[RMDB]
RNA sequence: GGGAACGACUCGAGUAGAGUCGAAAAAAUUCUACAAAUACAGUGAAAGUUGAAUGGUUUUUUCAAAACGGUUUGUGUCCCACUGGUUUUUGUACGCUUUGUUCUAUAAAUUAUUUGGCCGAUUAUAACCCCGUUACUAAACAUGAAUUACAACAUACUUACUCUUACAUUUCGAUGUAAGAGUAAGAAAAGAAACAACAACAACAAC
Reactivity to DMS in 0.01 (KOAc 150mM, MgCl2 10mM, bicine 150mM(pH8.5), 24C), signal-to-noise 1, nucleotides 027 to 156: a020a030u010u010c030u000a150c030a050a020a120u010a120c020a050g070u000g020a120a060a080g010u010u010g010a030a090u010g010g020u010u010u010u010u010u010c120a020a070a050a050c030g060g010u000u000u000g000u000g010u000c030c000c010a080c060u000g020g000u000u000u000u000u020g030u010a010c110g010c110u010u000u010g000u000u000c050u000a210u010a040a050a090u010u000a100u010u010u000g030g010c010c030g020a090u000u010a100u000a090a100c020c040c000c020g030u000u010a090c090u000a040a030a050c050a090u000g020a120a070u000u000a140c050a040a110c030a120u010a090
Reactivity to 2A3 in 0.01 (KOAc 150mM, MgCl2 10mM, bicine 150mM(pH8.5), 24C), signal-to-noise 1, nucleotides 027 to 156: a000a010u100u030c000u020a050c000a040a140a010u100a060c010a020g020u030g060a100a110a040g060u070u100g010a020a050u070g070g000u020u020u000u070u000u250c120a040a080a000a040c010g080g030u020u060u110g010u120g000u070c010c000c000a000c010u000g020g000u030u000u030u030u070g000u020a070c070g000c000u090u020u020g020u070u090c000u040a090u070a160a220a200u210u130a100u040u140u080g050g000c030c070g120a020u000u090a140u150a230a000c000c020c000c000g020u000u020a130c070u090a090a090a000c070a040u080g090a050a030u260u120a040c040a080a030c000a060u130a030
This 207-nucleotide RNA was probed chemically with DMS and 2A3. 2A3 is a SHAPE reagent: it acylates the 2'-hydroxyl of flexible nucleotides of all four kinds. The reactions ran in a buffer of 150 mM KOAc, 10 mM MgCl2 and 150 mM bicine (pH 8.5), at 24 C. For DMS, 1,918 sequencing reads were counted. It was measured as part of the RMDB library OK3TST. DMS adducts were read by reverse transcription with MarathonRT.